Background: An RNA of 177 nucleotides, treated with 2A3 and DMS and read out base by base. 2A3 adducts were read by reverse transcription with SuperScript II with manganese.
RNA sequence: GGGAACGACUCGAGUAGAGUCGAAAAGGUAUUUGUGACGAACUUGUUUGGUUUAACUGCCAAAGGUUUGGUACAAGGAGCGGCUGAAACAGCUCGACUUACUGCAAUUCAGACCGACUAUGUGGGAUGAUUUACCCAGGUUCGCCUGGGUAAAUCAAAAAGAAACAACAACAACAAC
Reactivity to 2A3 in 0.01 (KOAc 150mM, MgCl2 10mM, bicine 150mM(pH8.5), 24C), signal-to-noise 1, nucleotides 027 to 126: g110g020u110a120u020u080u020g020u030g010a030c040g030a010a000c030u070u160g100u240u030u020g020g060u050u050u030a130a050c140u150g000c010c000a000a000a020g000g020u010u010u050g070g000u000a010c000a020a000g080g000a020g000c000g090g000c000u040g190a050a140a170c020a010g070c020u120c080g030a080c030u090u200a030c010u010g050c030a000a010u030u000c010a030g240a290c000c000g050a080c030u080a140u210g170u150g050g050g010a050
Reactivity to DMS in 0.01 (KOAc 150mM, MgCl2 10mM, bicine 150mM(pH8.5), 24C), signal-to-noise 2, nucleotides 027 to 126: g010g000u020a040u010u000u000g040u010g010a050c020g010a010a010c000u000u000g010u010u020u000g030g010u000u010u000a130a160c260u000g040c010c010a000a030a050g000g020u010u010u000g010g010u010a020c040a010a040g010g000a060g000c010g000g010c000u010g010a010a000a150c040a050g020c060u000c090g010a130c160u000u010a090c040u010g000c090a110a120u000u000c020a010g010a110c020c010g000a130c060u000a090u020g020u000g000g000g010a250